[RMDB]
RNA sequence: GGGAACGACUCGAGUAGAGUCGAAAACAAUCUGGGCCAGACGCUCCUCUUGCUGUUGACGCAACUUCAUUAAUUGUUCCAACUCCUGCGCCCGACGCACCUCGUACUGGCUAUACGAUCCUGCAUACCCUGUUUACGAUUUCGAUCGUAAACAGGGAAAAGAAACAACAACAACAAC
Reactivity to 2A3 in 0.01 (KOAc 150mM, MgCl2 10mM, bicine 150mM(pH8.5), 24C), signal-to-noise 3, nucleotides 027 to 126: c010a020a060u030c050u070g010g050g000c030c020a030g030a070c070g000c030u040c060c010u070c020u020u070g000c040u090g030u140u090g030a030c010g020c050a030a030c030u110u040c030a130u110u240a130a100u090u150g020u070u050c030c000a050a050c050u010c040c010u040g000c000g010c030c050c020g020a030c010g000c010a040c020c020u030c000g030u050a110c010u020g010g000c010u030a030u030a130c030g020a030u030c000c010u020g040c000a030u050a110
Reactivity to DMS in 0.01 (KOAc 150mM, MgCl2 10mM, bicine 150mM(pH8.5), 24C), signal-to-noise 3, nucleotides 027 to 126: c140a110a150u010c080u010g030g000g000c040c030a090g000a120c120g000c130u020c020c020u020c030u000u010g020c020u010g000u000u000g010a080c150g010c070a100a080c120u000u010c050a070u000u010a050a130u010u000g010u000u010c030c020a110a120c070u020c020c000u010g030c030g050c020c000c020g010a060c070g000c050a060c070c030u000c060g020u000a120c020u010g010g020c020u000a180u020a120c110g000a060u010c070c010u000g060c060a140u000a130